[RMDB]
RNA sequence: GGGAACGACUCGAGUAGAGUCGAAAAGAAAGAAAGAACCCUUCCCGCGGGGCUUGAUCUUCCAGAUGGUGCGGGCCGGGACAAGCCGGAGAGUGUCCCGGUUUCAGAAACAACCUUCGGCAGCCAAACUAGACUACCCACUUCGGUGGGUAGUCAACGGGUAAUAAGUGUUCGCACUUAUUACCCGAAAAGAAACAACAACAACAAC
Reactivity to 2A3 in 0.01 (KOAc 150mM, MgCl2 10mM, bicine 150mM(pH8.5), 24C), signal-to-noise 1, nucleotides 027 to 156: g070a100a060a000g060a060a100a000g030a220a300c010c000c000u010u000c010c020c000g000c000g020g000g010g000c020u120u110g000a070u050c040u150u010c080c000a070g010a140u150g020g150u090g010c000g000g000g010c000c000g010g000g020a000c000a000a000g040c010c010g030g000a000g000a010g000u020g000u000c010c000c000g030g000u020u190u050c010a000g020a000a030a000c030a020a000c010c000u020u020c020g010g000c000a070g080c080c120a130a080a080c090u080a010g000a000c000u000a000c000c000c000a000c020u010u030c120g130g000u000g000g000g010u000a000g000u000c000a000a000
Structure probing data (2A3) for a 207-nucleotide construct. Conditions: 150 mM KOAc, 10 mM MgCl2 and 150 mM bicine (pH 8.5), 24 C. For 2A3 the reverse transcriptase was SuperScript II with manganese. Source: RMDB library M2RFPK, as collected in RNAgym.